[RMDB]
RNA sequence: GGGAACGACUCGAGUAGAGUCGAAAAGACAAAUGCAGCAUAUUAGGCUAAGCAGGAAAGGGACGGUAGCUCCUGGUGUCAGUUCAUACGGAGUGAUGCAUCUGCGUCGUGCACACAUGCACCCAAAGUACACCGACGUAUUCGUACGUCGGUGUACAAAAGAAACAACAACAACAAC
Reactivity to 2A3 in 0.01 (KOAc 150mM, MgCl2 10mM, bicine 150mM(pH8.5), 24C), signal-to-noise 2, nucleotides 027 to 126: g020a020c030a000a070a030u150g020c020a020g000c000a010u030a080u150u120a090g030g000c010u020a050a080g000c000a000g120g000a050a100a030g030g000g040a010c020g050g060u050a000g000c030u040c000c050u060g030g000u030g090u060c080a080g050u040u130c050a030u110a110c060g020g000a030g030u030g020a080u050g000c010a030u000c020u050g000c020g030u060c040g030u080g040c020a010c010a000c000a050u050g000c010a020c040c010c000a040a080a000
Reactivity to DMS in 0.01 (KOAc 150mM, MgCl2 10mM, bicine 150mM(pH8.5), 24C), signal-to-noise 2, nucleotides 027 to 126: g020a080c070a030a080a080u000g010c050a050g030c040a060u000a140u000u010a060g000g000c020u000a050a130g010c050a010g000g000a060a080a060g000g010g010a050c050g010g040u010a120g020c050u000c050c040u010g010g050u000g000u000c030a100g000u000u010c040a060u010a130c150g000g010a130g000u000g010a060u000g000c020a070u000c060u000g000c060g020u020c070g020u000g000c020a040c080a040c090a090u000g000c060a090c000c000c060a060a030a100

Structure probing data (2A3 and DMS) for a 177-nucleotide construct. 2A3 is a SHAPE reagent: it acylates the 2'-hydroxyl of flexible nucleotides of all four kinds. Reactivities are given for positions 27 through 126. For 2A3, 1,977 sequencing reads were counted. Conditions: 150 mM KOAc, 10 mM MgCl2 and 150 mM bicine (pH 8.5), 24 C. DMS (dimethyl sulfate) methylates the pairing face of unpaired adenines and cytosines.